[RMDB]
RNA sequence: GGGAACGACUCGAGUAGAGUCGAAAAUCGGCAAUUAUGUGAUGCUGGAAAUCGGUCAGCCGAUGCACGUUUUUGAUGCCGACAAACUUUCCGGCAGCCUGCACAUCCGCCGCGCGCGCGAAGGGGAGGCGUAUCCUGCUUUCGAGCAGGAUACGCCAAAAGAAACAACAACAACAAC
Reactivity to 2A3 in 0.01 (KOAc 150mM, MgCl2 10mM, bicine 150mM(pH8.5), 24C), signal-to-noise 1, nucleotides 027 to 126: u020c000g000g050c060a110a130u250u000a070u050g020u080g060a030u070g000c060u060g070g000a000a000a140u100c060g000g010u110c020a120g120c030c010g020a000u050g100c020a000c000g020u000u000u000u290u160g110a090u020g000c010c000g000a000c020a000a160a000c170u020u020u020c000c000g000g000c000a000g000c000c050u190g000c000a000c000a070u020c000c020g040c000c000g010c000g000c000g000c000g000c020g050a100a060g090g000g000g020a000
Structure probing data (2A3) for a 177-nucleotide construct. 2A3 adducts were read by reverse transcription with SuperScript II with manganese. The RNA was probed in 150 mM KOAc, 10 mM MgCl2 and 150 mM bicine (pH 8.5) at 24 C. Source: RMDB library OK1LIB, as collected in RNAgym. The 2A3 profile rests on 489 reads.